[RMDB]
RNA sequence: GGGAACGACUCGAGUAGAGUCGAAAAGAUAUGGAUUAGAGGGUGGAACUACGAGUACCAUCGGAAACGAUGGAAUACUCGCCACCUAGUCUAAUCCUAAGUCAAAGGGUUUUGUUCGCAAAACCCACUGAUAAGAGGUGUUCGCACCUCUUAUCAGAAAAGAAACAACAACAACAAC
Reactivity to DMS in 0.01 (KOAc 150mM, MgCl2 10mM, bicine 150mM(pH8.5), 24C), signal-to-noise 5, nucleotides 027 to 126: g000a070u000a300u010g000g000a010u000u000a010g040a060g010g000g020u000g000g010a100a060c170u030a300c050g020a010g020u000a070c000c000a000u000c000g000g000a100a130a180c000g010a010u010g000g000a110a120u000a010c010u010c010g000c010c020a020c010c000u010a030g010u000c000u000a010a010u010c010c010u000a020a090g020u000c030a090a120a210g010g010g000u000u000u000u000g020u010u020c290g030c010a000a010a000a020c000c000c000a070
Reactivity to 2A3 in 0.01 (KOAc 150mM, MgCl2 10mM, bicine 150mM(pH8.5), 24C), signal-to-noise 2, nucleotides 027 to 126: g030a010u110a030u190g000g000a000u010u020a010g010a030g040g030g010u010g000g060a180a090c150u280a080c300g010a000g010u020a040c010c000a010u000c000g030g020a100a070a020c010g000a000u010g010g000a040a030u040a000c000u000c000g000c000c000a000c000c000u000a020g020u000c000u000a000a010u000c000c010u030a140a020g060u040c070a120a060a160g010g000g000u020u010u010u020g030u030u120c300g000c190a000a000a000a010c000c000c000a010